[RMDB]
RNA sequence: GGGAACGACUCGAGUAGAGUCGAAAAAGGAUGACAGCCGCUUUGACAUAUUCGCCCUUGCCAAUCUCGCACCGGAGGUACCUAUCGAUGAUGGUUAACGCGCUGGCAACCGACGCGAAGAAUGCUGCCAUAUGCACGUGUUCGCACGUGCAUAUGGAAAAGAAACAACAACAACAAC
Reactivity to DMS in 0.01 (KOAc 150mM, MgCl2 10mM, bicine 150mM(pH8.5), 24C), signal-to-noise 3, nucleotides 027 to 126: a080g000g000a090u000g010a050c090a080g000c040c070g020c070u010u010u000g010a100c080a070u000a130u000u010c050g000c060c020c030u000u000g010c020c060a080a110u000c040u000c050g000c070a090c050c040g020g000a050g010g020u000a060c100c070u000a080u000c070g010a080u010g010a100u010g000g010u000u000a030a150c060g010c060g010c150u000g000g020c040a040a070c090c040g000a080c150g000c060g010a060a080g000a080a050u000g020c060u000g000
Reactivity to 2A3 in 0.01 (KOAc 150mM, MgCl2 10mM, bicine 150mM(pH8.5), 24C), signal-to-noise 2, nucleotides 027 to 126: a000g090g000a060u050g020a070c020a010g080c050c010g110c090u130u060u100g120a070c030a040u120a100u090u060c030g000c000c020c000u030u020g040c020c000a050a110u060c040u020c070g050c010a060c040c020g020g010a040g040g020u100a160c020c020u120a070u100c070g050a030u110g000a020u040g090g000u030u010a050a030c010g010c010g000c030u020g020g000c010a040a030c030c060g050a070c010g010c000g030a040a060g050a080a040u070g030c000u020g050
Structure probing data (DMS and 2A3) for a 177-nucleotide construct.
For DMS, 2,666 sequencing reads were counted.
The RNA was probed in 150 mM KOAc, 10 mM MgCl2 and 150 mM bicine (pH 8.5) at 24 C.
The data come from the RNA Mapping Database (RMDB), library OK2TST.
DMS adducts were read by reverse transcription with MarathonRT.